[RMDB]
RNA sequence: GGGAACGACUCGAGUAGAGUCGAAAAGAUAUGGAUCCCGGACCAACAGCUACUGAUCGGAAACGAUCAGGUAGACAUGGAAGGGAUCCUAAGUCAAAAGCUCCCUCUUGUUCGCAAGAGGGAGCAAGUUAGCUAUCUGGUUCGCCAGAUAGCUAACAAAAGAAACAACAACAACAAC
Reactivity to DMS in 0.01 (KOAc 150mM, MgCl2 10mM, bicine 150mM(pH8.5), 24C), signal-to-noise 3, nucleotides 027 to 126: g010a040u000a170u000g000g000a020u010c000c020c000g000g030a300c060c060a060a130c230a170g010c000u000a000c000u000g000a010u000c010g000g000a050a030a050c000g000a000u000c000a040g000g040u000a000g000a110c120a100u000g000g000a300a250g000g010g000a000u000c000c000u000a000a070g010u000c020a110a090a100a150g000c000u000c010c000c000u000c010u000u000g000u010u020c190g020c000a010a000g000a010g020g010g000a010g000c010a000a000
Reactivity to 2A3 in 0.01 (KOAc 150mM, MgCl2 10mM, bicine 150mM(pH8.5), 24C), signal-to-noise 1, nucleotides 027 to 126: g000a000u030a010u090g000g010a000u030c060c030c050g000g130a080c040c050a140a260c120a210g030c000u000a000c000u010g010a010u010c010g000g000a020a020a020c010g000a010u010c020a000g000g030u000a010g060a190c170a290u090g010g030a060a100g000g000g010a000u010c000c000u000a020a010g010u000c000a050a000a010a180g000c010u010c010c040c000u000c010u020u050g040u070u100c230g020c180a010a010g000a000g000g000g000a000g000c000a010a000